[RMDB]
RNA sequence: GGGAACGACUCGAGUAGAGUCGAAAAGAUAUGGAUUGGCUGGAGCCUCAAGUAACUGGGUUUCCCGUACUCGGAAACGAGUACGAACAACCCAGUUACUUAGGCGUUGAAAGCCAAUCCUAAGUCACUAUUGAAGGUAGUUCGCUACCUUCAAUAGAAAAGAAACAACAACAACAAC
Reactivity to DMS in 0.01 (KOAc 150mM, MgCl2 10mM, bicine 150mM(pH8.5), 24C), signal-to-noise 5, nucleotides 027 to 126: g020a040u010a300u000g010g000a020u000u000g000g010c000u000g000g000a170g010c020c000u000c300a010a000g010u000a000a010c010u000g010g000g010u010u000u010c300c190c030g020u000a000c000u000c000g000g010a150a120a250c000g000a020g000u000a000c000g020a050a130c300a030a020c000c010c000a020g010u000u000a000c000u000u000a020g000g010c000g000u000u010g000a170a110a050g010c010c000a000a000u000c000c000u000a020a080g010u000c030a300
Reactivity to 2A3 in 0.01 (KOAc 150mM, MgCl2 10mM, bicine 150mM(pH8.5), 24C), signal-to-noise 1, nucleotides 027 to 126: g030a000u050a050u180g000g000a000u020u000g020g010c000u010g040g040a040g020c000c000u060c120a010a000g000u000a000a000c000u000g000g060g000u010u020u030c090c040c020g010u000a000c000u000c020g030g030a060a090a070c010g010a010g000u000a000c000g000a020a010c020a010a010c010c000c010a010g000u010u000a000c000u000u000a000g000g010c000g000u140u010g000a000a000a010g010c010c000a010a000u000c000c010u000a010a010g000u000c020a010
The record gives the reactivity of an RNA of 177 nucleotides to DMS and 2A3.
The RNA was probed in 150 mM KOAc, 10 mM MgCl2 and 150 mM bicine (pH 8.5) at 24 C.
The data come from the RNA Mapping Database (RMDB), library TTRINS.